[RMDB]
RNA sequence: GGGAACGACUCGAGUAGAGUCGAAAAGAUAUGGAAUUUACCUCGCCGAUGAAAGGCUUCGGAAACGAAGCCUGGAGGACCCGAGAAGUAAAUUCCUAAGUCAAAUCUACCGGUUCGCCGGUAGAAAGUGACUAAUAAUGUUCGCAUUAUUAGUCACAAAAGAAACAACAACAACAAC
Reactivity to DMS in 0.01 (KOAc 150mM, MgCl2 10mM, bicine 150mM(pH8.5), 24C), signal-to-noise 4, nucleotides 027 to 126: g010a050u000a300u020g010g000a000a000u000u000u000a010c010c010u000c000g010c120c050g000a080u010g010a260a120a010g020g000c010u000u020c000g010g010a090a070a160c000g030a040a020g000c000c000u000g000g010a240g000g000a200c240c300c120g000a040g010a070a080g000u000a010a010a010u000u000c000c000u000a030a070g000u010c010a080a080a130u000c000u000a000c000c010g000g000u000u000c260g020c010c000g010g000u000a010g000a010a080a100
Reactivity to 2A3 in 0.01 (KOAc 150mM, MgCl2 10mM, bicine 150mM(pH8.5), 24C), signal-to-noise 3, nucleotides 027 to 126: g020a010u050a030u140g000g000a020a020u020u010u010a010c000c000u000c030g110c100c020g300a300u080g030a010a010a040g000g020c000u000u000c010g010g000a060a080a040c000g000a000a000g000c000c020u010g000g020a030g020g040a050c300c300c280g020a040g030a200a070g020u020a000a010a000u010u020c000c000u000a100a010g010u010c010a000a030a240u000c000u000a000c000c000g010g030u050u050c300g040c090c000g000g000u010a000g000a000a010a010